[RMDB]
RNA sequence: GGGAACGACUCGAGUAGAGUCGAAAAGAUAUGGAUCGUAUUAGCCUAUGCUUAGGGAGAGUUAAUAAUCGGAAACGAUUAUGCUCAUCGAUCUAAGAACUACAUAGGCUAAUACGAUCCUAAGUCACGUAUCAGGUUAGUUCGCUAACCUGAUACGAAAAGAAACAACAACAACAAC
Reactivity to DMS in 0.01 (KOAc 150mM, MgCl2 10mM, bicine 150mM(pH8.5), 24C), signal-to-noise 2, nucleotides 027 to 126: g020a070u010a300u010g030g000a020u000c010g030u000a000u000u000a030g000c000c000u000a000u000g070c000u020u000a020g030g010g000a170g000a030g010u000u000a110a050u000a000a000u000c000g000g000a120a110a200c020g000a000u000u000a030u000g000c000u010c020a120u000c150g000a150u030c010u010a000a000g000a090a040c130u020a300c020a020u000a020g010g000c000u000a000a000u000a000c020g020a000u010c000c000u000a010a040g000u000c080a300